An RNA of 177 nucleotides, treated with 2A3 and DMS and read out base by base.
RNA sequence: GGGAACGACUCGAGUAGAGUCGAAAACAGAAUUCAUCAAACGUUUCGGCGUUGAAGAUGGUUCCGUAGAAGGUCUGCGCGCUGAAGUGCGUAAAAACAUGGAGCGCGAGCUGAAGAGCGCCAUCCGUGUUACAGAGCAUUUCGAUGCUCUGUAACAAAAAGAAACAACAACAACAAC
Reactivity to 2A3 in 0.01 (KOAc 150mM, MgCl2 10mM, bicine 150mM(pH8.5), 24C), signal-to-noise 4, nucleotides 027 to 126: c020a020g060a030a060u220u190c010a030u010c030a040a070a030c010g010u000u040u130c220g180g000c010g000u020u080g090a140a050g010a020u010g010g000u040u000c010c020g000u050a050g030a210a030g030g040u030c080u140g080c030g000c000g000c030u070g050a110a010g040u040g020c010g000u050a090a000a000a000a000c030a010u060g060g010a040g000c020g000c020g010a020g000c030u050g020a100a000g050a020g040c010g030c030c010a040u030c030c040g040
Reactivity to DMS in 0.01 (KOAc 150mM, MgCl2 10mM, bicine 150mM(pH8.5), 24C), signal-to-noise 5, nucleotides 027 to 126: c040a070g010a040a030u000u010c010a000u000c020a140a050a030c010g000u000u000u010c170g030g010c010g000u010u000g010a140a100g020a020u010g010g010u000u000c000c030g030u010a070g010a130a090g000g000u010c070u000g010c040g000c020g000c020u010g010a200a220g010u000g000c010g000u000a050a050a090a070a080c030a030u000g020g000a110g000c020g010c020g010a150g030c050u000g000a120a090g000a160g010c030g000c030c040a090u010c030c030g020
The data come from the RNA Mapping Database (RMDB), library OK2TRN.